[RMDB]
RNA sequence: GGGAACGACUCGAGUAGAGUCGAAAAGAUAUGGACAGAUGAACUACUGGCUCGGGACCGUUGAAAUAGAUUCGGAAACGAAUCUAUGGAGGUCCCACGCCAGCAUCUGUCCUAAGUCAAAGGAGAUUUUUCAAAGUUCGCUUUGAAAAAUCUCCAACACAUCCCUUGUGUUCGCACAAGGGAUGUGAAAAGAAACAACAACAACAAC
Reactivity to 2A3 in 0.01 (KOAc 150mM, MgCl2 10mM, bicine 150mM(pH8.5), 24C), signal-to-noise 1, nucleotides 027 to 156: g000a010u000a000u020g000g000a000c000a000g010a020u010g000a020a000c020u150a030c020u300g000g040c000u020c160g000g000g010a000c010c010g110u160u020g000a000a010a000u000a000g000a000u000u000c000g010g000a020a000a010c010g000a000a020u010c000u010a010u000g000g000a020g010g000u020c000c000c000a000c000g000c000c000a000g020c000a000u010c000u000g010u000c000c000u000a000a010g000u010c000a070a000a050g000g000a020g000a000u000u000u000u000u000c010a030a010a000g040u060u090c210g110c130u020u010u020g000a000a010a000a000a010u000c000u000c000c010a000a000